[RMDB]
RNA sequence: GGGAACGACUCGAGUAGAGUCGAAAAAUAAUCGGGAUUGCGAUCCAAAAGCUGCGUUAGUACCUCUUGUGCAUACUCUUUUUCGUUCACUUUGAUUGCUAGUUUCCCAGCCUCUAGGUACACGUCCAUUAUCCGAUGAGUUCGCUCAUCGGAUAAUAAAAGAAACAACAACAACAAC
Reactivity to DMS in 0.01 (KOAc 150mM, MgCl2 10mM, bicine 150mM(pH8.5), 24C), signal-to-noise 4, nucleotides 027 to 126: a070u020a070a060u020c070g010g000g000a090u010u000g030c050g010a050u020c050c010a070a080a090a090g010c040u000g000c030g010u010u020a100g020u000a060c030c010u000c030u020u020g010u010g020c050a060u010a060c050u000c040u020u020u000u000u010c020g010u000u010c040a060c040u000u010u020g000a090u010u010g030c060u010a060g020u020u010u000c000c010c010a130g000c060c020u000c020u000a040g010g010u000a030c090a050c060g010u000c110c060
Reactivity to 2A3 in 0.01 (KOAc 150mM, MgCl2 10mM, bicine 150mM(pH8.5), 24C), signal-to-noise 8, nucleotides 027 to 126: a000u250a020a050u090c060g030g020g030a040u050u140g040c060g060a040u050c030c010a020a060a050a050g060c070u080g010c030g060u080u100a030g020u080a070c010c010u050c030u060u100g060u110g040c010a030u040a120c010u040c030u090u060u020u040u070c020g030u020u030c020a040c070u100u080u120g080a110u040u110g050c040u030a040g070u020u040u020c000c010c000a000g010c000c000u020c040u060a030g000g000u030a000c040a000c060g020u010c050c010